Overview: This 177-nucleotide RNA was probed chemically with DMS. The data come from the RNA Mapping Database (RMDB), library OK2TRN. Reactivities are given for positions 27 through 126.

[RMDB]
RNA sequence: GGGAACGACUCGAGUAGAGUCGAAAAGGCUUCGCGCUGGCGCGCGUCCUGCAUCGCGUUGGUGAGGCCGCUCAUGAUCGAGCCGAACAGCGCGAGCGCGGCCACCGAUACGACGAGCGCCUUCGGAUCACUGCACGACUUUCGAGUCGUGCAGUGAAAAAGAAACAACAACAACAAC
Reactivity to DMS in 0.01 (KOAc 150mM, MgCl2 10mM, bicine 150mM(pH8.5), 24C), signal-to-noise 1, nucleotides 027 to 126: g010g010c070u000u040c060g040c140g020c100u000g030g020c040g050c020g000c010g050u000c010c080u000g020c070a200u000c000g020c020g020u000u020g010g040u000g010a270g020g000c000c030g030c060u010c180a180u000g000a030u000c050g030a150g020c000c000g000a180a110c060a070g000c000g000c000g000a020g010c070g000c030g000g040c070c040a070c070c020g000a130u010a080c070g000a080c010g010a050g020c030g000c010c000u020u020c070g020g000a220